[RMDB]
RNA sequence: GGGAACGACUCGAGUAGAGUCGAAAACUUAUCAACACGAGCCUUGAUAAAGUCCAUAACCUCUGCUUUAUUUUCAUAAGUCAAACUGUCAAAUUUCAAUGCAUAAAGGCUAUCAAUCAGCUCAUCCCACACUGCCUUCAUUCGUGAAGGCAGUGUGAAAAGAAACAACAACAACAAC
Reactivity to 2A3 in 0.01 (KOAc 150mM, MgCl2 10mM, bicine 150mM(pH8.5), 24C), signal-to-noise 2, nucleotides 027 to 126: c020u050u040a090u190c050a020a010c060a010c240g120a020g000c010c020u010u020g020a030u060a090a150a040g050u010c040c020a010u010a100a080c000c030u070c050u060g020c040u060u060u070a080u120u150u050u080c100a100u110a280a030g030u030c080a060a080a100c050u060g040u080c060a070a030a140u060u120u150c030a050a050u180g030c000a030u110a130a080a000g020g000c030u020a010u120c020a060a010u060c020a000g010c000u080c000a080u070c000c010
Reactivity to DMS in 0.01 (KOAc 150mM, MgCl2 10mM, bicine 150mM(pH8.5), 24C), signal-to-noise 1, nucleotides 027 to 126: c010u000u000a100u020c030a040a040c130a020c090g010a050g010c030c090u000u000g000a030u000a060a040a070g020u000c080c090a080u000a060a130c000c000u000c000u010g000c040u000u000u000a080u010u000u000u000c000a100u000a100a120g020u010c150a060a060a130c130u000g000u000c060a040a060a140u000u000u000c060a060a130u020g000c020a080u020a050a070a060g000g000c030u000a060u000c060a060a070u030c140a060g000c000u030c070a150u000c100c030
An RNA of 177 nucleotides, treated with 2A3 and DMS and read out base by base. For 2A3, 1,295 sequencing reads were counted. For DMS, 599 sequencing reads were counted. The RNA was probed in 150 mM KOAc, 10 mM MgCl2 and 150 mM bicine (pH 8.5) at 24 C.